An RNA of 177 nucleotides, treated with DMS and 2A3 and read out base by base.
For DMS the reverse transcriptase was MarathonRT.
The RNA was probed in 150 mM KOAc, 10 mM MgCl2 and 150 mM bicine (pH 8.5) at 24 C.
Values cover nucleotides 27 to 126.

[RMDB]
RNA sequence: GGGAACGACUCGAGUAGAGUCGAAAACGAGGGUUUGCUACUUCGAUGUCGUCUGUUCCUAUCCUGGUGCUGCAUAAGACACCAAGGGUGGGGCUGUUCGCCCAUUAAAAGGGAUCCUGAGAUGGGUGUACAGGUCAUCUUUCGAGAUGACCUGUACAAAAGAAACAACAACAACAAC
Reactivity to DMS in 0.01 (KOAc 150mM, MgCl2 10mM, bicine 150mM(pH8.5), 24C), signal-to-noise 2, nucleotides 027 to 126: c040g000a220g020g020g000u000u000u020g010c000u000a020c000u000u030c000g000a020u030g000u000c010g000u010c060u000g000u000u030c010c000u000a000u010c000c010u040g000g010u000g020c000u000g000c300a160u080a160a030g000a130c000a000c000c010a010a070g000g000g000u000g000g010g010g000c050u030g000u000u010c060g030c020c000c000a020u040u000a000a060a110a040g000g000g040a210u010c020c000u010g000a300g000a020u010g000g010g030u030
Reactivity to 2A3 in 0.01 (KOAc 150mM, MgCl2 10mM, bicine 150mM(pH8.5), 24C), signal-to-noise 4, nucleotides 027 to 126: c060g050a150g070g220g020u050u050u110g040c000u000a020c010u110u140c020g050a070u150g010u010c000g000u020c010u050g040u080u170c000c000u000a010u000c000c000u000g000g000u000g000c010u030g000c000a110u080a300a040g020a110c010a030c000c000a050a070g010g000g000u020g020g000g000g000c030u040g030u040u080c050g020c010c000c000a000u020u140a110a160a020a020g100g020g080a150u120c020c000u030g010a040g020a070u040g000g000g000u050